[RMDB]
RNA sequence: GGGAACGACUCGAGUAGAGUCGAAAACACAGGCCCUCCCCUCGGCAGUGGGGCCAGGAUUGGGUUGCUGGUGCUGAGAGAAAGCCCUUGAUUGCAUCCUUGCUCUGGGACUGUACCAGUGGCAGCUUUAUAUCAACGCCUUCGGGCGUUGAUAUAAAAAAGAAACAACAACAACAAC
Reactivity to 2A3 in 0.01 (KOAc 150mM, MgCl2 10mM, bicine 150mM(pH8.5), 24C), signal-to-noise 2, nucleotides 027 to 126: c010a010c010a010g010g000c000c000c020u000c040c020c000c010u070c010g080g000c070a050g160u080g040g010g000g040c010c000a010g060g010a110u120u230g050g000g000u050u080g060c010u020g000g180u080g020c050u030g060a080g000a010g090a140a080a030g020c000c000c010u000u050g210a280u020u130g010c000a030u080c010c000u060u050g010c000u000c010u000g030g040g070a100c010u000g000u070a120c000c010a000g000u000g100g020c000a020g020c000u040
Reactivity to DMS in 0.01 (KOAc 150mM, MgCl2 10mM, bicine 150mM(pH8.5), 24C), signal-to-noise 1, nucleotides 027 to 126: c100a100c220a110g000g010c030c000c020u000c020c010c030c070u000c040g000g000c080a140g010u020g000g000g020g000c080c020a070g030g000a080u050u020g000g000g020u000u000g000c040u000g040g010u000g000c020u000g000a220g010a200g000a080a090a090g000c070c000c020u000u060g000a020u020u010g100c040a050u020c110c160u000u000g030c050u000c030u000g000g000g000a180c050u000g030u040a080c040c010a040g020u020g020g000c050a040g000c080u050